An RNA of 177 nucleotides, treated with 2A3 and DMS and read out base by base. The DMS profile rests on 2,058 reads. Conditions: 150 mM KOAc, 10 mM MgCl2 and 150 mM bicine (pH 8.5), 24 C.

RNA sequence: GGGAACGACUCGAGUAGAGUCGAAAAUCACGCUGGCGCGGGGCUAUCUCGAAGACGCGGCGCAGGUGACACAGGCCGUGAGCAGCGGCAGCGGCGAGGAAGUCUAUAUGGCGCUCUACACGCUGGGCAGGUGCUAACAAUUCGUUGUUAGCACCUGAAAAGAAACAACAACAACAAC
Reactivity to 2A3 in 0.01 (KOAc 150mM, MgCl2 10mM, bicine 150mM(pH8.5), 24C), signal-to-noise 2, nucleotides 027 to 126: u030c020a020c050g040c060u090g120g000c010g000c030g000g080g070g050c060u100a090u190c030u120c060g070a130a070g120a040c030g030c000g080g000c030g020c020a050g000g060u100g040a020c020a000c010a160g100g050c010c000g060u040g050a070g000c070a010g000c010g030g010c000a030g030c020g010g000c000g000a040g000g060a150a030g040u010c080u030a120u010a080u300g060g010c010g010c030u020c000u030a070c100a030c020g000c010u040g000g000g000
Reactivity to DMS in 0.01 (KOAc 150mM, MgCl2 10mM, bicine 150mM(pH8.5), 24C), signal-to-noise 3, nucleotides 027 to 126: u000c030a080c070g010c050u000g000g010c060g030c050g000g010g020g040c110u010a080u000c000u010c050g030a100a100g000a190c050g010c040g010g020c050g050c040a060g000g010u020g010a090c150a120c110a140g010g010c050c000g000u010g000a120g010c100a090g000c040g000g010c040a090g000c020g010g010c070g010a070g000g000a060a100g000u020c050u000a100u000a080u010g030g000c010g010c060u000c100u000a080c110a130c080g000c030u010g000g010g020